An RNA of 177 nucleotides, treated with DMS and 2A3 and read out base by base. For 2A3 the reverse transcriptase was SuperScript II with manganese. For DMS, 949 sequencing reads were counted. For 2A3, 4,485 sequencing reads were counted.

RNA sequence: GGGAACGACUCGAGUAGAGUCGAAAACAGAUGAUGUUCGCAUCAUCUGAAAUAAAAGCCAUGCAGGAAGGAAGGAGCAUGGCAACCAACCAACGAAAAUAAAAAUCUGUUCCUUCGGGAACAGAAACUGUUGCUAAAAGUUCGCUUUUAGCAACAGAAAAGAAACAACAACAACAAC
Reactivity to DMS in 0.01 (KOAc 150mM, MgCl2 10mM, bicine 150mM(pH8.5), 24C), signal-to-noise 2, nucleotides 027 to 126: c000a000g020a010u000g010a030u010g000u000u020c250g020c000a050u000c000a040u000c000u010g000a050a070a040u000a020a090a110a110g020c000c000a010u000g020c000a070g000g000a090a070g000g000a200a130g000g010a190g020c020a020u010g000g020c000a010a000c030c030a110a150c090c150a060a100c240g020a080a070a070a090u010a030a080a020a100a080u000c000u010g010u000u010c000c000u000u020c170g070g010g000a010a000c020a020g000a000a040a060
Reactivity to 2A3 in 0.01 (KOAc 150mM, MgCl2 10mM, bicine 150mM(pH8.5), 24C), signal-to-noise 4, nucleotides 027 to 126: c000a000g010a010u000g010a000u000g020u060u070c190g000c090a000u000c000a000u000c000u000g000a010a010a010u060a010a070a010a000g000c000c000a000u010g000c020a030g130g210a260a020g110g050a090a030g040g070a150g000c010a010u000g000g020c010a000a010c000c000a000a030c030c030a020a050c080g160a140a070a100a030u240a040a110a040a010a020u020c010u000g000u010u000c010c000u020u040c220g080g000g000a000a000c000a000g000a000a010a000